[RMDB]
RNA sequence: GGGAACGACUCGAGUAGAGUCGAAAAAAAGAUAUGGACAAGCAAGUCUCCUUGGAUUUAUUAGCGAACGUAUUCGGAAACGAAUAUCAGUAGCUAAUUGUCAGGAGUCACCUUGUCCUAAGUCAAAGAUACGACCUAACUUCGGUUAGGUCGUAUCAAAAGAAACAACAACAACAAC
Reactivity to DMS in 0.01 (KOAc 150mM, MgCl2 10mM, bicine 150mM(pH8.5), 24C), signal-to-noise 1, nucleotides 027 to 126: a140a040a140g000a060u000a300u000g000g000a010c010a000a040g030c170a140a140g000u000c010u000c000c010u000u040g030g030a060u020u000u000a030u010u000a060g020c000g000a190a140c300g000u000a000u010u000c000g000g000a140a140a150c000g010a070a000u000a000u000c010a030g030u000a070g000c000u000a000a000u010u000g000u000c000a040g000g000a020g000u000c030a150c270c000u030u010g000u000c000c010u010a000a080g000u030c030a100a030a110
Reactivity to 2A3 in 0.01 (KOAc 150mM, MgCl2 10mM, bicine 150mM(pH8.5), 24C), signal-to-noise 1, nucleotides 027 to 126: a000a000a080g040a000u070a010u180g000g000a000c010a000a040g110c040a300a300g040u020c000u000c020c000u110u240g260g070a030u300u300u190a020u060u030a000g000c010g000a040a000c070g000u040a000u020u010c040g050g000a070a100a040c010g020a000a010u000a010u040c010a010g000u030a000g000c000u020a000a000u000u000g000u030c000a010g000g040a010g030u020c050a100c030c000u000u030g000u000c000c000u010a060a050g060u000c030a150a020a040